Background:
Structure probing data (2A3) for a 177-nucleotide construct. Values are in units of 0.01, from 0 to 300, in steps of 10. 2A3 adducts were read by reverse transcription with SuperScript II with manganese.

[RMDB]
RNA sequence: GGGAACGACUCGAGUAGAGUCGAAAAAGCUAGUUCGACAUACCAUACUACCCUUUUUAAAACUAUCCUAUAUGUUUGAUGCUAGCAUAGCGUAAUUUUGUGUUCUCAUGGUGCAGCAGGGUUAGUUUCGUUCAACUGGGUUCGCCCAGUUGAACGAAAAAGAAACAACAACAACAAC
Reactivity to 2A3 in 0.01 (KOAc 150mM, MgCl2 10mM, bicine 150mM(pH8.5), 24C), signal-to-noise 1, nucleotides 027 to 126: a010g030c010u000a020g000u000u050c070g000a000c000a000u060a000c000c000a010u000a060c070u140a100c030c050c000u040u020u000u160u270a150a150a000a020c090u170a090u170c010c010u040a040u000a110u240g020u010u020u300g080a000u060g000c000u000a000g000c000a150u050a020g030c020g000u150a110a250u000u060u030u060g000u090g030u000u020c000u000c030a140u080g000g000u090g000c040a000g150c000a010g000g030g000u000u020a080g000u010u000